[RMDB]
RNA sequence: GGGAACGACUCGAGUAGAGUCGAAAACGCGGACGGCACGACGCUCGCGACGACGCGCACGAGGCUGAAGGCCGAUCCGCUCAUCACGUUCGUCGGGAUUUCAUACAAGUUCUGAGCCGUGGGCGCAAAUAGUCACUGGCUUCGGCCAGUGACUAUUAAAAGAAACAACAACAACAAC
Reactivity to 2A3 in 0.01 (KOAc 150mM, MgCl2 10mM, bicine 150mM(pH8.5), 24C), signal-to-noise 1, nucleotides 027 to 126: c070g000c000g000g010a010c010g030g050c020a000c010g060a010c030g000c010u000c010g060c000g010a070c040g120a060c150g190c020g000c010a020c180g030a020g200g070c000u020g020a020a020g040g020c030c000g040a190u020c020c010g030c000u000c000a020u010c010a020c000g050u100u100c040g080u000c020g030g000g010a000u000u050u000c190a140u190a250c090a020a060g030u040u100c000u010g010a010g000c020c020g030u120g000g060g000c100g070c070a000
Reactivity to DMS in 0.01 (KOAc 150mM, MgCl2 10mM, bicine 150mM(pH8.5), 24C), signal-to-noise 2, nucleotides 027 to 126: c230g000c050g010g010a060c020g000g000c010a070c020g010a300c290g020c000u010c000g030c020g010a030c040g030a170c260g000c060g020c030a050c050g010a050g020g020c000u000g010a300a300g000g000c040c000g020a110u010c030c000g030c000u000c110a040u010c040a000c030g010u000u000c060g020u000c050g020g000g000a060u000u020u000c080a140u010a140c200a070a020g000u000u000c040u000g000a070g000c300c000g010u000g000g000g000c120g020c190a110